[RMDB]
The record gives the reactivity of an RNA of 177 nucleotides to 2A3 and DMS. 2A3 is a SHAPE reagent: it acylates the 2'-hydroxyl of flexible nucleotides of all four kinds. In probing experiments dimethyl sulfate is read out at A N1 and C N3, which are open when not base-paired. DMS adducts were read by reverse transcription with MarathonRT. The reactions ran in a buffer of 150 mM KOAc, 10 mM MgCl2 and 150 mM bicine (pH 8.5), at 24 C.
RNA sequence: GGGAACGACUCGAGUAGAGUCGAAAAAGCCAGUAAGGCCUUAAGCGCAGCAAACUCCCGCCCUGAAAACUGCACCCCAUCUUUUUCAUGAUUUUCAAAAGAGGCGGUAGCGCACGGCGCAACUGCAAAUAAUAAUUAUAUUCGUAUAAUUAUUAUUAAAAGAAACAACAACAACAAC
Reactivity to 2A3 in 0.01 (KOAc 150mM, MgCl2 10mM, bicine 150mM(pH8.5), 24C), signal-to-noise 1, nucleotides 027 to 126: a030g110c040c010a020g140u120a160a220g020g000c000c000u130u100a110a080g040c010g000c060a050g000c020a030a000a090c020u040c040c000c000g000c000c000c000u020g060a140a040a000a000c050u040g010c010a080c000c000c000c010a080u050c070u100u140u080u070u020c050a030u010g070a150u090u100u140u100c100a150a030a000a040g090a100g020g050c040g000g020u030a040g000c010g000c030a120c130g110g000c010g010c020a020a020c000u030g000c000a010
Reactivity to DMS in 0.01 (KOAc 150mM, MgCl2 10mM, bicine 150mM(pH8.5), 24C), signal-to-noise 1, nucleotides 027 to 126: a080g000c090c010a060g010u000a120a130g010g000c010c000u000u010a100a060g020c060g070c010a080g000c050a090a130a120c110u020c110c020c000g020c030c020c040u000g000a040a050a130a150c070u000g010c040a040c020c040c040c010a090u030c020u000u000u060u040u010c040a060u010g000a110u030u020u030u020c130a040a120a100a170g030a040g000g040c040g010g000u000a030g010c020g030c020a110c210g040g000c000g030c050a040a000c000u000g000c000a070

The 2A3 profile rests on 526 reads. Source: RMDB library OK1LIB, as collected in RNAgym.